[RMDB]
RNA sequence: GGGAACGACUCGAGUAGAGUCGAAAAAUGCGAAAUUGAGUCAUAUUAUCAUCGACGAUGGAACUCAACCAUUGGGAAUGAGGUUGGUUGAUGGAAUGCCCAAUGAAGGUUUGAUGUGGAAGGAUGACGUAUACUCCCCGUUCGCGGGGAGUAUACGAAAAGAAACAACAACAACAAC
Reactivity to DMS in 0.01 (KOAc 150mM, MgCl2 10mM, bicine 150mM(pH8.5), 24C), signal-to-noise 2, nucleotides 027 to 126: a060u000g010c080g020a070a170a120u030u010g000a080g000u020c120a090u020a040u010u000a160u010c070a060u000c050g000a160c060g000a030u020g010g000a040a090c090u040c100a080a040c050c000a030u000u000g030g000g010a250a040u050g000a070g000g030u020u000g000g040u000u000g000a070u040g000g000a120a050u000g000c010c010c010a020a030u030g000a170a040g000g010u000u000u000g020a070u000g020u010g000g010a220a040g040g000a040u010g000a080
Reactivity to 2A3 in 0.01 (KOAc 150mM, MgCl2 10mM, bicine 150mM(pH8.5), 24C), signal-to-noise 3, nucleotides 027 to 126: a020u300g000c070g070a070a040a000u120u040g010a040g100u090c070a000u130a080u080u150a140u230c000a030u020c080g130a100c080g050a100u180g030g050a020a010c000u010c080a000a020c000c000a000u000u110g030g030g090a010a160u090g010a050g100g000u050u090g080g000u000u080g000a010u130g000g040a150a000u010g060c000c000c000a050a110u190g000a140a020g030g040u000u040u030g100a120u060g040u070g000g070a020a080g110g010a110u150g030a010